RNA sequence: GGGAACGACUCGAGUAGAGUCGAAAAGACAAAUGCAGCAUAUUAGGCUAAGCAGGAAAGGGACGCUAGCUCCUGGUGUCAGUUCAUACGGUGUGAUGCAUCUGCGUCGUGCACACAUGCACCCAAAUGAGAAAAUCAGUUUCGACUGAUUUUCUCAAAAAGAAACAACAACAACAAC
Reactivity to 2A3 in 0.01 (KOAc 150mM, MgCl2 10mM, bicine 150mM(pH8.5), 24C), signal-to-noise 2, nucleotides 027 to 126: g020a030c030a020a070a020u110g000c010a020g000c010a000u050a100u210u170a110g100g000c040u090a080a030g000c000a010g060g000a100a030a010g020g040g010a000c010g000c030u040a040g020c010u030c030c010u040g060g000u020g040u000c030a030g030u080u130c040a050u090a140c070g060g000u030g010u020g010a130u010g000c020a020u010c030u090g030c020g040u100c020g010u050g000c010a010c000a000c000a040u040g090c030a050c000c000c020a030a070a110
Reactivity to DMS in 0.01 (KOAc 150mM, MgCl2 10mM, bicine 150mM(pH8.5), 24C), signal-to-noise 4, nucleotides 027 to 126: g020a070c070a030a090a070u000g020c050a040g010c010a060u010a100u000u000a090g020g010c030u000a060a110g000c030a050g010g020a050a070a080g010g010g000a040c050g000c080u000a090g030c090u000c030c010u000g000g010u010g000u000c040a050g000u010u010c070a060u000a070c100g000g010u010g010u000g000a080u000g010c030a020u010c070u010g000c040g000u000c070g000u000g000c010a020c080a030c070a030u010g010c080a130c010c020c030a020a070a090